[RMDB]
RNA sequence: GGGAACGACUCGAGUAGAGUCGAAAACAAUACGGUGACCUUGCAAAUUAGAAUCUUGUAUCAAUUUACCUGCAAAAUGACCAGGCGGUCUUUGGAAUACACUACCACAUGAAGGAUACUCUAAAGGCCUUACAGAAACCUUCGGGUUUCUGUAAGGAAAAGAAACAACAACAACAAC
Reactivity to DMS in 0.01 (KOAc 150mM, MgCl2 10mM, bicine 150mM(pH8.5), 24C), signal-to-noise 2, nucleotides 027 to 126: c100a060a100u070a090c100g000g010u000g010a040c060c050u030u000g020c040a080a070a100u010u040a050g040a050a080u010c070u010u000g070u040a090u020c080a160a040u020u020u020a080c080c000u000g000c100a030a000a130a050u000g010a090c070c020a120g000g030c100g000g010u000c020u000u000u030g000g010a030a010u010a040c170a080c070u020a060c060c040a080c100a060u000g000a020a070g030g000a170u030a030c130u000c000u000a050a030a010g040g000
Reactivity to 2A3 in 0.01 (KOAc 150mM, MgCl2 10mM, bicine 150mM(pH8.5), 24C), signal-to-noise 4, nucleotides 027 to 126: c060a040a100u150a090c050g030g020u050g030a070c000c000u030u070g050c030a040a080a190u090u030a160g100a120a120u050c020u070u150g040u170a100u090c040a080a070u060u130u130a070c030c020u010g010c040a030a070a070a160u120g020a070c030c000a010g100g000c030g020g010u020c000u020u020u040g010g020a040a020u070a070c020a020c060u100a090c000c010a050c030a060u140g020a060a010g080g030a040u060a120c020u040c020u110a100a080a010g060g020
An RNA of 177 nucleotides, treated with DMS and 2A3 and read out base by base.
Source: RMDB library OK1LIB, as collected in RNAgym.
2A3 adducts were read by reverse transcription with SuperScript II with manganese.